Overview:
An RNA of 177 nucleotides, treated with DMS and 2A3 and read out base by base. Values cover nucleotides 27 to 126.
RNA sequence: GGGAACGACUCGAGUAGAGUCGAAAAGAUAUGGACCACUACCCACCCUUGUAGCGCGUUGAAACGUAACUGAGAUCGGAAACGAUCUCAGUUACGUGGAGCGUGAGGAGGAGGUGGUCCUAAGUCACUUAAUACAACGGUUCGCCGUUGUAUUAAGAAAAGAAACAACAACAACAAC
Reactivity to DMS in 0.01 (KOAc 150mM, MgCl2 10mM, bicine 150mM(pH8.5), 24C), signal-to-noise 6, nucleotides 027 to 126: g010a110u000a260u010g000g000a020c000c000a010c010u000a190c030c010c030a300c210c010c030u000u010g000u010a300g010c010g010c000g000u000u020g000a220a120a010c010g010u010a000a000c000u000g000a020g000a010u000c000g000g000a130a120a250c000g010a010u000c000u010c000a010g010u000u000a000c000g000u000g000g000a090g020c010g010u000g000a130g000g020a040g010g000a250g000g010u000g000g010u010c000c010u000a010a100g010u020c150a250
Reactivity to 2A3 in 0.01 (KOAc 150mM, MgCl2 10mM, bicine 150mM(pH8.5), 24C), signal-to-noise 3, nucleotides 027 to 126: g070a080u280a180u300g000g020a000c010c000a020c020u190a300c060c020c020a060c000c000c040u000u170g090u130a040g000c000g020c070g220u250u080g020a000a050a000c000g000u000a010a010c000u000g010a010g000a020u010c020g000g050a070a080a030c010g020a000u020c000u000c000a000g000u000u000a000c000g010u000g000g010a010g010c000g010u040g010a070g000g120a000g020g030a040g030g000u010g000g000u010c000c000u000a050a010g130u050c040a020